Source: RMDB library OK3TST, as collected in RNAgym.
An RNA of 207 nucleotides, treated with 2A3 and read out base by base.
The 2A3 profile rests on 943 reads.
Values cover nucleotides 27 to 156.

RNA sequence: GGGAACGACUCGAGUAGAGUCGAAAAGCCACUCAUAGUCCACCACCUGAUGGCCGCUGGGAAGGUGCUCCAUCGUUGGCUGCAUGUGGCACCAUAGCGCAAGCUCAGGCAGGGCCUUGGUGAUGUGUGACCUCCAUCCCACUGUGGCCUUGCAGGCUGUAUCUGCUUCGUUCGCGAAGCAGAUACAAAAAGAAACAACAACAACAAC
Reactivity to 2A3 in 0.01 (KOAc 150mM, MgCl2 10mM, bicine 150mM(pH8.5), 24C), signal-to-noise 2, nucleotides 027 to 156: g000c000c000a030c010u150c070a110u120a100g100u080c020c000a050c000c020a030c020c040u100g070a120u090g050g010c040c010g000c040u040g000g060g060a190a080g020g010u020g010c050u000c040c010a040u050c130g040u110u050g140g010c050u050g000c010a010u030g000u040g010g000c000a030c010c000a080u170a100g110c100g010c100a120a040g030c000u040c060a060g150g000c060a040g000g080g050c000c020u030u110g030g000u090g000a150u060g070u000g050u100g090a090c000c020u030c020c010a040u040c040c020c000a070c060u100g020u080g070g000c000c000u030u110g050c050a060g050g020c000